RNA sequence: GGGAACGACUCGAGUAGAGUCGAAAACAGAAGAGUUACUUGGAUUAGUUGCAAUGUGGGAAGUUCGUGGUAAUGACUGGAGAGCUAAUUUGAAUGAGAUAAAUACUUAUCAAAAAGCCAUAGAAGAGCUAGGGAGACAAUUCGUUGUCUCCCUAGCAAAAGAAACAACAACAACAAC
Reactivity to DMS in 0.01 (KOAc 150mM, MgCl2 10mM, bicine 150mM(pH8.5), 24C), signal-to-noise 2, nucleotides 027 to 126: c040a060g000a060a180g030a210g010u000u000a050c100u000u000g000g000a070u020u000a090g010u000u030g000c050a020a040u060g020u000g000g000g040a040a200g000u000u000c110g040u010g000g040u010a000a110u020g000a110c180u000g020g000a050g000a270g000c020u020a090a130u010u000u000g000a070a020u000g010a000g030a060u020a090a030a100u000a070c020u030u000a050u000c020a000a020a090a070a120g000c000c050a070u020a060g010a140a040g000a100
Reactivity to 2A3 in 0.01 (KOAc 150mM, MgCl2 10mM, bicine 150mM(pH8.5), 24C), signal-to-noise 2, nucleotides 027 to 126: c030a010g050a130a010g050a040g030u120u050a040c080u100u080g120g000a020u080u090a060g140u020u070g000c060a000a100u060g000u100g000g110g000a050a000g000u060u110c080g050u030g080g000u050a100a050u130g040a040c000u020g010g010a030g000a010g050c030u090a010a210u040u000u080g160a120a120u060g000a040g000a050u060a110a160a000u090a080c040u000u000a010u010c010a000a020a000a080a000g000c050c010a030u070a080g120a160a040g040a040
Record summary:
Structure probing data (DMS and 2A3) for a 177-nucleotide construct. For DMS, 1,728 sequencing reads were counted. It was measured as part of the RMDB library RFM100. Conditions: 150 mM KOAc, 10 mM MgCl2 and 150 mM bicine (pH 8.5), 24 C.